[RMDB]
RNA sequence: GGGAACGACUCGAGUAGAGUCGAAAACUACAAUGAGGGUGUUUUCUGGAGCAAAGAUAUCAAGGCUCAUUUAACCCACAGGGACUCCUGCUUCUUUGUUCAUUGGUCCUAUUUUCUGACCAUUGUCAUAAUAUUUCUGGGUGAUUGAAGAGGGCACCAGCAAAUACCGAUUCGUCGGUAUUUGCUGAAAAGAAACAACAACAACAAC
Reactivity to DMS in 0.01 (KOAc 150mM, MgCl2 10mM, bicine 150mM(pH8.5), 24C), signal-to-noise 2, nucleotides 027 to 156: c050u000a150c060a100a070u010g010a040g010g010g000u030g010u000u000u000u000c080u020g040g040a050g020c030a060a050a140g010a120u000a140u000c070a050a120g000g030c000u000c030a070u000u010u000a080a090c070c010c020a090c070a080g010g050g000a060c110u000c070c030u000g040c300u000u010c020u000u000u000g010u000u000c060a170u000u000g010g010u000c000c110u000a160u000u000u000u000c090u030g020a040c010c020a070u000u050g000u000c020a070u000a050a100u000a050u000u000u010c040u020g010g040g000u010g010a100u000u000g030a060a070g000a070g020g020g030c010a100c050
Reactivity to 2A3 in 0.01 (KOAc 150mM, MgCl2 10mM, bicine 150mM(pH8.5), 24C), signal-to-noise 2, nucleotides 027 to 156: c030u100a050c030a070a140u140g010a060g000g030g020u000g020u000u080u070u060c050u020g060g020a040g020c050a080a080a070g070a040u210a030u170c040a090a030g090g000c000u020c020a010u090u150u060a080a070c000c050c010a070c030a010g000g030g060a060c070u070c050c010u020g030c040u160u050c000u080u090u090g020u040u030c000a020u000u010g000g000u010c020c020u060a160u080u150u070u040c080u070g000a010c000c000a030u030u010g020u000c000a050u040a270a070u050a180u050u230u020c060u030g020g060g010u030g030a120u090u090g040a020a030g010a070g040g020g000c010a010c010